About this RNA:
Structure probing data (DMS and 2A3) for a 177-nucleotide construct.

RNA sequence: GGGAACGACUCGAGUAGAGUCGAAAAGAUAUGGAGGACCUCUUUGGGAGCUUUGAUCACGCCAGUCGGAAACGACUGCGUGGGAGCUCCGAGGUCCUCCUAAGUCAAAGGUCAGUUCGCUGACCAAGGGUAUAUAAAGCUUCGGCUUUAUAUACCCAAAAGAAACAACAACAACAAC
Reactivity to DMS in 0.01 (KOAc 150mM, MgCl2 10mM, bicine 150mM(pH8.5), 24C), signal-to-noise 1, nucleotides 027 to 126: g000a010u000a040u020g000g000a020g020g010a000c000c000u000c030u010u010u030g030g030g000a010g030c000u000u010u020g000a020u010c010a010c010g020c120c170a030g020u000c010g020g000a010a010a040c000g000a010c000u000g010c000g040u000g000g000g000a000g000c000u000c000c010g030a000g000g000u000c000c000u010c000c000u000a010a050g000u000c020a070a140a170g000g000u000c000a010g020u000u000c300g010c000u000g000a020c000c020a050a110
Reactivity to 2A3 in 0.01 (KOAc 150mM, MgCl2 10mM, bicine 150mM(pH8.5), 24C), signal-to-noise 2, nucleotides 027 to 126: g010a000u040a010u060g010g010a030g000g010a000c030c030u010c070u280u300u300g300g020g020a040g000c000u300u300u010g010a010u000c000a000c020g030c150c130a010g000u000c000g000g050a000a010a000c010g020a000c000u000g000c010g020u000g030g000g010a010g000c000u000c020c010g000a000g000g000u000c000c000u000c010c010u000a000a000g000u000c010a060a060a010g030g000u010c000a000g000u040u200c270g010c230u020g010a000c000c010a010a060
For DMS, 2,838 sequencing reads were counted.
Reactivities are given for positions 27 through 126.